[RMDB]
RNA sequence: GGGAACGACUCGAGUAGAGUCGAAAAGAUAUGGAGAGGAGCUUUUGACGCGAGAGUGGUCGGAAACGACCACGUUCGCGAUAAGCUCCCUCCUAAGUCAAAACAAGAACUCUUCGGAGUUCUUGAACACCUCGUAAUUGUUCGCAAUUACGAGGUGAAAAGAAACAACAACAACAAC
Reactivity to DMS in 0.01 (KOAc 150mM, MgCl2 10mM, bicine 150mM(pH8.5), 24C), signal-to-noise 2, nucleotides 027 to 126: g000a060u000a300u010g000g000a000g000a180g030g010a010g000c000u000u000u000u020g030a270c080g000c010g000a010g000a040g030u000g000g000u010c000g000g000a140a100a170c000g010a020c000c000a020c000g010u000u020c000g030c000g000a070u010a010a010g000c010u000c000c000c000u000c000c000u000a010a060g010u000c010a100a090a060a240c010a010a000g010a030a010c000u000c010u000u020c200g040g000a010g000u000u000c000u000u000g000a070a210
Reactivity to 2A3 in 0.01 (KOAc 150mM, MgCl2 10mM, bicine 150mM(pH8.5), 24C), signal-to-noise 2, nucleotides 027 to 126: g000a020u040a010u160g010g030a020g120a300g060g000a030g020c030u040u060u100u220g300a190c050g000c000g000a010g000a010g040u000g020g000u020c010g050g000a060a050a040c040g010a010c000c040a010c010g020u010u000c010g010c020g020a030u020a020a000g020c000u000c000c030c010u000c000c000u000a140a000g000u010c040a020a010a120a200c010a010a000g000a020a010c000u000c010u130u210c300g070g000a000g010u000u000c000u000u000g000a040a010
Chemical mapping of a 177-nucleotide RNA with DMS and 2A3.
For DMS, 1,578 sequencing reads were counted.
2A3 is a SHAPE reagent: it acylates the 2'-hydroxyl of flexible nucleotides of all four kinds.
For 2A3, 2,516 sequencing reads were counted.
Values cover nucleotides 27 to 126.
Conditions: 150 mM KOAc, 10 mM MgCl2 and 150 mM bicine (pH 8.5), 24 C.